[RMDB]
RNA sequence: GGGAACGACUCGAGUAGAGUCGAAAAUCAUCUAUGUUCGCAUAGAUGAACAGAGCCUUGUAGUUUUAGUGGACUUUAGGCUAAAGAAUUUCACUAGAAAAAUAAUCGGGUGUUUCGACACCCGAAAGCAUUGAACAGAAUUCGUUCUGUUCAAUGCAAAAGAAACAACAACAACAAC
Reactivity to DMS in 0.01 (KOAc 150mM, MgCl2 10mM, bicine 150mM(pH8.5), 24C), signal-to-noise 2, nucleotides 027 to 126: u000c010a010u000c000u000a000u000g010u000u010c160g020c010a010u000a000g000a010u000g010a020a140c160a140g000a100g010c030c010u000u000g000u000a040g000u010u000u020u000a020g080u020g000g000a000c020u010u010u000a010g000g010c060u000a090a090a120g010a070a140u010u030u010c000a010c010u010a040g000a030a090a070a110a140u010a080a120u010c010g000g000g030u000g010u000u000u010c160g000a020c000a010c010c000c000g000a010a030a050
Reactivity to 2A3 in 0.01 (KOAc 150mM, MgCl2 10mM, bicine 150mM(pH8.5), 24C), signal-to-noise 3, nucleotides 027 to 126: u000c000a000u000c000u000a000u020g020u020u060c150g000c110a010u000a010g010a010u000g000a010a000c020a030g180a010g010c010c000u030u060g110u140a070g020u060u030u020u000a020g000u010g030g010a010c000u060u060u030a020g000g040c020u090a090a160a060g070a050a120u110u220u160c000a000c010u020a040g150a050a170a050a080a100u200a040a120u040c000g020g000g000u000g020u020u100u110c140g030a010c000a000c010c020c000g000a010a000a000